An RNA of 177 nucleotides, treated with 2A3 and DMS and read out base by base. The DMS profile rests on 3,329 reads. It was measured as part of the RMDB library M2PK50. 2A3 adducts were read by reverse transcription with SuperScript II with manganese.
RNA sequence: GGGAACGACUCGAGUAGAGUCGAAAACGAGAUGAGUUCGCUCAUCUCGAAAGAACCGCGGGGGUGACUCGGUCAGAGCAUGACAGGCGCUGCGGUCACGAAAAAGUGGUGUGUUCGCACACCACAACCAAUUACUCCAGUUCGCUGGAGUAAUUGGAAAAGAAACAACAACAACAAC
Reactivity to 2A3 in 0.01 (KOAc 150mM, MgCl2 10mM, bicine 150mM(pH8.5), 24C), signal-to-noise 3, nucleotides 027 to 126: c010g000a000g020a000u010g010a000g060u070u130c190g070c110u000c020a000u000c000u010c000g000a000a010a010g020a060a030c020c030g000c070g060g030g000g000g020u070g060a080c010u030c210g040g070u100c080a020g010a020g050c060a050u120g080a100c020a050g130g000c070g000c070u040g000c010g020g000u030c010a030c070g090a110a070a010a030a000g010u010g000g000u010g000u010g010u000u060c180g020c080a000c000a000c000c000a000c000a000a000
Reactivity to DMS in 0.01 (KOAc 150mM, MgCl2 10mM, bicine 150mM(pH8.5), 24C), signal-to-noise 2, nucleotides 027 to 126: c000g010a000g000a010u000g000a010g020u000u010c230g010c000u000c000a000u000c000u000c000g010a020a060a110g000a150a130c010c010g000c130g010g000g020g020g020u000g000a040c010u010c050g000g000u000c040a020g010a100g000c040a080u010g010a100c260a110g000g000c010g000c010u000g000c000g000g000u000c020a020c050g000a050a070a070a110a090g010u000g000g010u000g020u000g010u000u010c210g000c000a000c000a000c000c000a000c000a030a070